Chemical mapping of a 177-nucleotide RNA with DMS and 2A3. 2A3 adducts were read by reverse transcription with SuperScript II with manganese. Conditions: 150 mM KOAc, 10 mM MgCl2 and 150 mM bicine (pH 8.5), 24 C. Source: RMDB library OK2TRN, as collected in RNAgym. DMS adducts were read by reverse transcription with MarathonRT. Values cover nucleotides 27 to 126.
[RMDB]
RNA sequence: GGGAACGACUCGAGUAGAGUCGAAAACCCGCAGAAGUGGGGUUGGCCUUGUAUAGUUUACAAGAUGUUGAUCCAGCCGACGUUGUUUGUGCCAUGGCCAAGCAUAAAAUGAACACCCUUUUUGCGGCACUGUGUGCAGAUUCGUCUGCACACAGUGAAAAGAAACAACAACAACAAC
Reactivity to DMS in 0.01 (KOAc 150mM, MgCl2 10mM, bicine 150mM(pH8.5), 24C), signal-to-noise 3, nucleotides 027 to 126: c050c010c000g040c060a010g000a030a020g010u010g020g010g030g030u010u000g000g000c100c010u010u010g000u010a030u000a140g020u010u010u000a020c030a020a020g000a150u000g010u010u010g010a130u010c010c040a080g000c010c000g020a070c150g010u010u010g010u000u010u000g010u000g000c020c020a040u010g000g000c040c030a110a100g000c030a030u010a020a040a030a090u000g000a040a060c120a300c020c010c010u000u000u000u010u000g010c050g000g000
Reactivity to 2A3 in 0.01 (KOAc 150mM, MgCl2 10mM, bicine 150mM(pH8.5), 24C), signal-to-noise 1, nucleotides 027 to 126: c000c000c000g000c010a050g000a050a040g100u160g040g090g000g000u020u040g000g000c000c010u030u000g030u020a170u040a160g260u080u210u050a020c000a000a000g040a080u140g090u180u170g060a050u010c000c040a020g030c050c040g010a060c040g080u040u040g000u010u070u000g030u040g000c000c000a060u060g080g000c000c000a000a000g020c010a060u130a070a200a010a090u100g050a050a020c030a090c000c000c050u000u000u010u030u010g000c000g020g000